[RMDB]
RNA sequence: GGGAACGACUCGAGUAGAGUCGAAAAGUAGUGAGGCAGCGUCGUCUACGACGUUCCACUAUGAAGCGGUCGCCAGGCUUUGGAAGUACGUGGACGAUGUAGAGUCUGGACGACAUGAGCAGGCAUGGGCACAAGCAUGGUUCGCCAUGUUUGUGCCAAAAGAAACAACAACAACAAC
Reactivity to DMS in 0.01 (KOAc 150mM, MgCl2 10mM, bicine 150mM(pH8.5), 24C), signal-to-noise 3, nucleotides 027 to 126: g000u000a000g010u000g010a030g000g010c030a050g000c010g000u000c010g010u010c060u000a030c000g010a050c030g020u000u000c000c020a060c090u010a060u010g030a120a050g010c090g010g030u030c050g000c030c050a010g030g000c000u000u000u010g020g010a090a160g020u020a080c090g000u010g000g000a010c000g010a080u000g030u030a030g010a090g010u000c000u020g020g010a300c000g000a050c070a100u030g000a280g000c060a150g010g000c160a300u080g000
Reactivity to 2A3 in 0.01 (KOAc 150mM, MgCl2 10mM, bicine 150mM(pH8.5), 24C), signal-to-noise 6, nucleotides 027 to 126: g010u010a000g000u000g050a110g010g010c020a010g000c010g000u000c000g010u010c040u060a050c030g010a010c020g040u030u000c010c000a000c000u010a030u100g070a080a020g040c050g030g030u030c020g010c030c020a010g020g000c000u080u040u070g080g060a120a080g070u110a080c090g070u110g050g120a030c070g070a090u110g050u160a030g000a010g030u010c000u020g080g030a210c000g000a000c030a050u210g020a040g000c030a020g130g000c060a080u180g070